[RMDB]
RNA sequence: GGGAACGACUCGAGUAGAGUCGAAAAAGUGGACAGGUCAAUACUUCAACCGAGUGCGGAGGGCUGGUUAAUGGGUAGCGUAAAUACGAUCAUCCAAGCCAACAACAUCACUCGAAUCCAGAAGGGCGAGUACGAUGCGAAGGUGAUGAUCCAGCAGGCGUGUUUCAGCAUUCGUGCUGAAACACGCAAAAGAAACAACAACAACAAC
Reactivity to 2A3 in 0.01 (KOAc 150mM, MgCl2 10mM, bicine 150mM(pH8.5), 24C), signal-to-noise 2, nucleotides 027 to 156: a010g020u120g000g050a010c040a090g060g000u070c040a060a030u070a060c050u070u090c020a050a040c040c040g040a010g000u080g010c010g000g060a060g000g000g000c020u020g000g000u050u070a080a050u080g030g000g000u050a030g010c030g030u040a010a150a090u180a060c050g010a010u020c020a000u000c070c010a170a010g030c020c000a040a060c010a000a000c000a060u000c000a000c010u000c010g060a100a140u030c020c020a070g060a300a160g080g010g010c000g000a000g010u020a090c110g000a010u030g000c030g070a060a000g000g030u090g000a000u000g000a000u030c060c010a020g080c010a030g120
This 207-nucleotide RNA was probed chemically with 2A3.